The record gives the reactivity of an RNA of 177 nucleotides to DMS and 2A3. The 2A3 profile rests on 1,145 reads. The RNA was probed in 150 mM KOAc, 10 mM MgCl2 and 150 mM bicine (pH 8.5) at 24 C. For DMS, 1,116 sequencing reads were counted. DMS adducts were read by reverse transcription with MarathonRT. 2A3 adducts were read by reverse transcription with SuperScript II with manganese.
[RMDB]
RNA sequence: GGGAACGACUCGAGUAGAGUCGAAAACGGGCGUCGCGCCGGAGGUAAAUGCCGAGCAGGUAAAACUGACGCCGAUGGCGCGUCUGGGCCAGCCUGCUGAAGUGGCUGAUGUCGCGCUUUGGCUCAAGUGCUAAUAUCGCUUCGGCGAUAUUAGCACAAAAGAAACAACAACAACAAC
Reactivity to DMS in 0.01 (KOAc 150mM, MgCl2 10mM, bicine 150mM(pH8.5), 24C), signal-to-noise 1, nucleotides 027 to 126: c060g010g030g070c050g010u010c020g020c000g010c020c010g020g020a280g000g000u000a100a080a080u000g010c060c070g020a100g000c040a020g020g020u010a040a050a120a100c050u000g010a060c130g020c010c010g010a180u000g020g010c070g000c020g010u000c000u010g000g000g020c020c040a100g010c040c000u000g020c040u000g000a090a060g020u010g020g000c000u010g020a120u010g000u000c010g000c030g020c080u000u000u000g010g010c000u000c050a110a090
Reactivity to 2A3 in 0.01 (KOAc 150mM, MgCl2 10mM, bicine 150mM(pH8.5), 24C), signal-to-noise 1, nucleotides 027 to 126: c010g040g020g010c020g040u030c000g000c010g030c010c000g020g010a010g020g000u090a050a150a080u130g040c010c060g060a060g040c070a020g050g000u100a080a080a050a030c040u020g070a000c030g000c010c000g020a060u120g070g070c030g010c010g020u000c000u050g000g030g050c010c010a000g020c030c040u030g010c040u040g020a080a020g060u070g160g000c040u060g060a080u160g030u070c010g000c000g000c000u070u020u030g030g050c000u050c050a030a070